[RMDB]
RNA sequence: GGGAACGACUCGAGUAGAGUCGAAAACAUGGACAGAUUGCCCGGCCACCAGAUAUGUGCGCUUGCGCGAACGAUUGCGCUCUUGUGGAUAUCGGCUCCGAAGGCGUUUAGCACCAUGCCGCGCCAACUAGCAUGGUACGUUCGCGUACCAUGCUAGAAAAGAAACAACAACAACAAC
Reactivity to DMS in 0.01 (KOAc 150mM, MgCl2 10mM, bicine 150mM(pH8.5), 24C), signal-to-noise 1, nucleotides 027 to 126: c050a020u010g000g000a130c080a070g000a050u000u000g000c000c000c000g030g000c090c040a140c070c020a070g000a070u020a060u010g020u000g000c040g000c040u010u000g010c030g060c000g010a040a080c180g000a180u000u000g010c020g030c000u000c050u000u000g000u000g000g000a070u000a060u000c030g010g030c150u010c070c050g020a090a040g020g000c010g010u000u010u000a110g030c030a070c080c050a050u010g000c020c110g030c120g020c030c040a070a150
Reactivity to 2A3 in 0.01 (KOAc 150mM, MgCl2 10mM, bicine 150mM(pH8.5), 24C), signal-to-noise 1, nucleotides 027 to 126: c050a030u060g020g040a010c030a040g080a120u090u130g020c000c060c000g050g010c000c010a040c010c020a040g040a060u090a030u190g300u070g040c030g010c050u030u060g020c010g010c020g000a050a090c120g140a170u000u140g000c010g030c000u010c000u070u050g040u030g000g060a010u050a050u060c030g050g010c000u000c020c080g070a070a070g030g000c000g030u080u110u220a030g000c050a010c050c030a040u070g060c000c010g050c030g040c000c000a020a060
Record summary: The record gives the reactivity of an RNA of 177 nucleotides to DMS and 2A3. For 2A3, 1,367 sequencing reads were counted. Source: RMDB library OK2TST, as collected in RNAgym. The RNA was probed in 150 mM KOAc, 10 mM MgCl2 and 150 mM bicine (pH 8.5) at 24 C. For DMS the reverse transcriptase was MarathonRT.